This 177-nucleotide RNA was probed chemically with DMS and 2A3. The reactions ran in a buffer of 150 mM KOAc, 10 mM MgCl2 and 150 mM bicine (pH 8.5), at 24 C.
[RMDB]
RNA sequence: GGGAACGACUCGAGUAGAGUCGAAAACGAGGAAACGGUAUCUAGUACUUAAUUCUUUGACUGGAUGAAGGCAUGUAGUUAUCUGGUUUCGAUCACUGUUGUGUCGGGUGGAACGUCCUCGGGUCGGAUCCAUUCUGGGAUUCGUCCCAGAAUGGAUAAAAGAAACAACAACAACAAC
Reactivity to DMS in 0.01 (KOAc 150mM, MgCl2 10mM, bicine 150mM(pH8.5), 24C), signal-to-noise 3, nucleotides 027 to 126: c050g020a060g010g010a070a080a070c120g020g000u010a030u000c040u010a050g000u000a060c050u000u010a080a160u000u010c060u010u010u000g020a080c110u000g010g010a030u000g000a180a070g000g010c060a020u000g010u000a030g010u000u010a040u000c020u010g040g010u000u000u000c060g000a030u000c060a050c040u000g000u010u000g040u010g010u000c020g020g010g000u010g000g000a100a100c060g000u000c070c000u000c020g000g010g000u000c060g010g010
Reactivity to 2A3 in 0.01 (KOAc 150mM, MgCl2 10mM, bicine 150mM(pH8.5), 24C), signal-to-noise 2, nucleotides 027 to 126: c060g010a040g050g000a000a150a030c020g030g000u040a030u060c030u030a100g050u040a190c020u130u100a150a250u300u030c000u110u100u070g050a050c020u010g000g040a020u020g040a070a000g030g000c030a010u070g020u060a020g000u020u020a000u060c030u110g170g080u060u060u130c070g020a050u030c010a020c040u060g080u300u120g030u060g000u060c000g000g000g100u160g130g020a120a020c020g000u030c010c000u010c030g000g000g030u030c010g050g010